[RMDB]
RNA sequence: GGGAACGACUCGAGUAGAGUCGAAAAAUGAAGGCGGCGAAGAAGCCCCAGAAGGCAUUCGGCUCAUCCUUGAUGCCGACGAAGUAGAGCACGCCUGCCACGCCAACCAUCAUCAGGAUGAAAGCUACUAGUAGUCCUCAUUCGUGAGGACUACUAGAAAAGAAACAACAACAACAAC
Reactivity to 2A3 in 0.01 (KOAc 150mM, MgCl2 10mM, bicine 150mM(pH8.5), 24C), signal-to-noise 1, nucleotides 027 to 126: a000u040g010a040a100g030g020c070g000g000c010g020a120a020g130a100a020g210c000c000c010c000a030g140a080a070g000g010c000a040u110u000c040g030g000c010u040c030a140u110c010c020u040u090g010a030u130g020c070c000g000a010c020g060a120a010g050u150a050g060a060g080c010a010c060g010c010c020u030g020c000c020a030c010g010c010c030a050a050c040c030a090u070c000a010u050c030a020g120g020a030u040g010a090a070a000g090c070u100a050
Reactivity to DMS in 0.01 (KOAc 150mM, MgCl2 10mM, bicine 150mM(pH8.5), 24C), signal-to-noise 2, nucleotides 027 to 126: a100u000g010a190a110g010g010c060g010g020c020g040a100a140g000a130a130g000c010c020c040c080a110g000a100a160g000g020c010a020u000u000c070g000g010c000u020c100a030u000c140c070u010u010g000a050u000g000c080c030g000a090c130g000a100a070g040u010a090g000a190g010c060a050c070g000c020c040u010g020c040c010a080c100g000c010c030a040a080c130c030a030u000c040a080u000c130a070g010g010a040u000g000a050a210a140g000c070u010a110

Background: The data come from the RNA Mapping Database (RMDB), library OK2TST. Chemical mapping of a 177-nucleotide RNA with 2A3 and DMS. For DMS, 1,282 sequencing reads were counted. Reactivities are given for positions 27 through 126.